[RMDB]
RNA sequence: GGGAACGACUCGAGUAGAGUCGAAAACUGGAAGUCGUCAAAGUCGACGAAGCGGUGGUAGGCUCCGGUGUUGAUGGUGUAGGAGCAGUUGGCCAUGACGGACCAGUUGACGGUCUGGUGGCCCGGACGCACGAGCUCGUGGUACUUGAGGCGCGAGUAUAUUUACCACCUUCGGGUGGUAAAUAUAAAAAGAAACAACAACAACAAC
Reactivity to DMS in 0.01 (KOAc 150mM, MgCl2 10mM, bicine 150mM(pH8.5), 24C), signal-to-noise 2, nucleotides 027 to 156: c010u000g040g000a130a140g030u010c000g000u000c010a050a130a300g000u000c010g030a050c010g000a100a110g000c000g020g030u010g020g020u010a150g000g010c030u000c020c010g000g010u000g020u010u000g010a110u000g010g020u000g050u000a200g030g010a090g070c000a120g030u000u010g030g020c010c010a070u020g010a300c060g050g020a000c000c000a150g020u010u010g010a130c140g030g010u000c000u000g030g010u000g000g040c000c010c040g020g020a060c070g020c010a220c110g010a160g030c020u000c010g040u000g020g040u000a020c030u000u000g000a190g010g000c000g010c020g000a070g020
Reactivity to 2A3 in 0.01 (KOAc 150mM, MgCl2 10mM, bicine 150mM(pH8.5), 24C), signal-to-noise 2, nucleotides 027 to 156: c040u040g030g100a100a020g060u090c010g020u000c040a030a020a070g070u060c020g060a010c030g020a040a010g050c040g040g060u110g010g010u070a050g090g060c060u060c030c020g030g090u090g040u140u150g080a170u100g040g160u090g020u100a050g000g000a010g010c000a000g020u120u110g000g000c000c000a010u030g070a020c000g010g000a010c000c000a040g050u060u170g100a090c100g000g000u010c000u010g050g000u000g000g000c000c050c010g020g020a020c040g000c050a010c030g040a020g000c010u000c010g020u020g080g030u140a030c020u020u070g020a080g140g010c010g000c020g020a010g050

This 207-nucleotide RNA was probed chemically with DMS and 2A3. DMS adducts were read by reverse transcription with MarathonRT. It was measured as part of the RMDB library OK3TST. For 2A3, 1,150 sequencing reads were counted.